[RMDB]
RNA sequence: GGGAACGACUCGAGUAGAGUCGAAAAACGUACCAUGGCACUCAUGAUCUAGACAUGCGUACUACAUGGCGCGCUAGUCAUGGAGAUACUCGCUGGAUCGCUCACGAUAGUACGUGGAUCGUCUCCACCGUUCCUGUAUCUUCGGAUACAGGAACGGAAAAGAAACAACAACAACAAC
Reactivity to 2A3 in 0.01 (KOAc 150mM, MgCl2 10mM, bicine 150mM(pH8.5), 24C), signal-to-noise 3, nucleotides 027 to 126: a000c090g010u090a110c060c020a070u040g020g010c090a010c030u050c020a040u230g020a050u040c020u040a020g070a120c030a090u200g000c040g000u040a060c000u020a020c020a050u060g000g030c070g010c030g060c160u090a040g030u010c000a010u020g030g000a020g000a010u080a030c070u060c020g000c030u040g010g020a020u020c040g000c050u120c040a100c080g080a080u070a090g030u040a060c010g010u040g030g010a080u060c040g010u030c040u010c030c000a070
Reactivity to DMS in 0.01 (KOAc 150mM, MgCl2 10mM, bicine 150mM(pH8.5), 24C), signal-to-noise 2, nucleotides 027 to 126: a060c050g020u000a130c010c000a080u000g010g000c080a080c090u000c060a090u030g030a010u010c010u000a060g000a110c090a080u000g080c090g000u000a040c030u000a060c050a010u010g000g000c010g030c290g030c100u000a060g020u020c020a020u020g000g000a020g000a190u010a020c040u020c100g030c020u000g000g000a040u000c030g010c170u000c080a060c070g000a130u000a040g000u000a020c040g010u000g020g030a140u000c090g010u000c090u000c000c060a150